[RMDB]
RNA sequence: GGGAACGACUCGAGUAGAGUCGAAAACGCGGCAUUCACAUAACACCCAUGCGGGUCUACGGGCCUGUGUGCAGUGGUGUGGAUGGGUAGGGGAGCGUCGUGCAGCCAUGGAAGCGCCGGAGUGAUCUGAGCUACGAGUAUUCGUACUCGUAGCUCAAAAAGAAACAACAACAACAAC
Reactivity to DMS in 0.01 (KOAc 150mM, MgCl2 10mM, bicine 150mM(pH8.5), 24C), signal-to-noise 3, nucleotides 027 to 126: c070g020c050g000g020c030a010u000u000c010a020c020a050u000a100a170c020a010c020c300c010a000u010g000c000g020g010g030u010c000u000a070c230g020g000g000c000c010u000g000u000g000u000g010c300a090g040u000g010g010u010g020u010g020g010a020u010g000g010g000u000a050g000g000g000g000a080g000c070g000u020c020g010u040g010c090a090g020c030c030a070u000g000g020a070a080g000c040g020c030c000g000g000a080g000u000g000a080u010c080
Reactivity to 2A3 in 0.01 (KOAc 150mM, MgCl2 10mM, bicine 150mM(pH8.5), 24C), signal-to-noise 2, nucleotides 027 to 126: c040g000c030g030g010c010a010u010u000c010a020c020a030u110a190a040c000a030c010c000c000a000u030g010c000g000g000g000u000c010u030a180c250g110g010g020c010c000u000g010u000g040u010g020c070a050g020u020g020g040u020g000u010g000g000a030u030g050g010g060u110a080g040g020g010g010a040g000c050g060u010c000g000u030g050c060a060g000c030c000a070u080g070g010a050a030g050c020g000c020c000g030g000a030g030u070g040a060u030c080
Conditions: 150 mM KOAc, 10 mM MgCl2 and 150 mM bicine (pH 8.5), 24 C. The record gives the reactivity of an RNA of 177 nucleotides to DMS and 2A3. Values cover nucleotides 27 to 126. The 2A3 profile rests on 1,729 reads. 2A3 adducts were read by reverse transcription with SuperScript II with manganese.